[RMDB]
Structure probing data (2A3 and DMS) for a 177-nucleotide construct. Values cover nucleotides 27 to 126. DMS adducts were read by reverse transcription with MarathonRT. It was measured as part of the RMDB libraries RFM100 and RFMREP. The reactions ran in a buffer of 150 mM KOAc, 10 mM MgCl2 and 150 mM bicine (pH 8.5), at 24 C.
RNA sequence: GGGAACGACUCGAGUAGAGUCGAAAAGGCCAUAAUUUAUGAAACUGAGCUCCAGUCUCAGCCAAUCACUUAGCUUCCCAUAACAAGUCUAACUGGCUCAGAAGAGCUAGCUGUGCCGCAAUAAAACGUCUUAUCGCCAAUUCGUUGGCGAUAAGACAAAAGAAACAACAACAACAAC
Reactivity to 2A3 in 0.01 (KOAc 150mM, MgCl2 10mM, bicine 150mM(pH8.5), 24C), signal-to-noise 4, nucleotides 027 to 126: g070g000c010c000a040u090a120a150u050u120u200a190u120g050a200a060a020c020u000g000a000g010c000u090c120c100a050g040u040c010u010c000a020g000c040c000a000a060u070c000a040c110u030u040a010g020c000u000u000c030c000c000a000u040a070a000c090a020a010g020u040c010u000a020a030c000u030g000g000c000u000c010a250g110a300a030g010a040g000c010u000a040g020c010u030g060u150g070c040c000g060c040a020a160u130a100a140a000a000c040
Reactivity to DMS in 0.01 (KOAc 150mM, MgCl2 10mM, bicine 150mM(pH8.5), 24C), signal-to-noise 1, nucleotides 027 to 126: g000g100c040c060a150u000a010a020u000u000u000a290u000g000a140a170a170c060u000g000a100g120c040u000c100c250a100g000u060c000u000c000a000g000c000c230a120a060u020c000a080c120u000u080a080g000c080u000u000c000c000c000a000u060a140a170c100a000a230g000u000c190u000a020a250c040u000g000g000c000u020c000a250g040a210a040g000a000g000c000u000a140g060c300u000g000u170g140c040c000g040c150a200a060u000a000a000a140a080c100